Source: RMDB library RFM100, as collected in RNAgym. Structure probing data (DMS and 2A3) for a 177-nucleotide construct. DMS adducts were read by reverse transcription with MarathonRT. The DMS profile rests on 2,086 reads.
RNA sequence: GGGAACGACUCGAGUAGAGUCGAAAACGUUUAGGGAGGGAAACUUCUCGGCGUACUGUAAAACUCCGAACUCGUCACCGUCGUAGAAGGUUGGAGUGAGGGGCGCGGGGUAAGCUUGUGUCCCGAAAUCUGAUGGGGUGUUCGCACCCCAUCAGAUAAAAGAAACAACAACAACAAC
Reactivity to DMS in 0.01 (KOAc 150mM, MgCl2 10mM, bicine 150mM(pH8.5), 24C), signal-to-noise 2, nucleotides 027 to 126: c010g060u000u000u010a120g010g000g010a030g010g000g010a010a030a090c000u000u000c000u000c000g020g000c000g010u000a150c120u030g120u000a030a070a180a100c000u030c000c000g000a110a010c020u000c000g000u000c020a050c050c050g000u000c080g030u020a150g000a060a170g000g000u000u010g010g060a130g010u010g000a130g000g000g010g000c290g000c050g000g000g000g000u040a050a300g010c020u000u000g000u010g010u000c000c000c000g000a070a040
Reactivity to 2A3 in 0.01 (KOAc 150mM, MgCl2 10mM, bicine 150mM(pH8.5), 24C), signal-to-noise 2, nucleotides 027 to 126: c000g010u090u080u090a170g000g030g010a030g010g000g030a110a000a000c010u030u000c000u010c000g020g030c000g020u050a090c060u110g100u120a020a020a070a070c000u000c000c030g030a080a050c000u000c030g110u040c160a010c050c000g120u150c030g040u070a050g120a180a060g060g020u030u090g110g020a030g040u000g010a040g050g010g000g000c040g000c000g010g000g000g040u120a180a000g050c000u050u090g010u000g000u030c000c000c000g000a120a120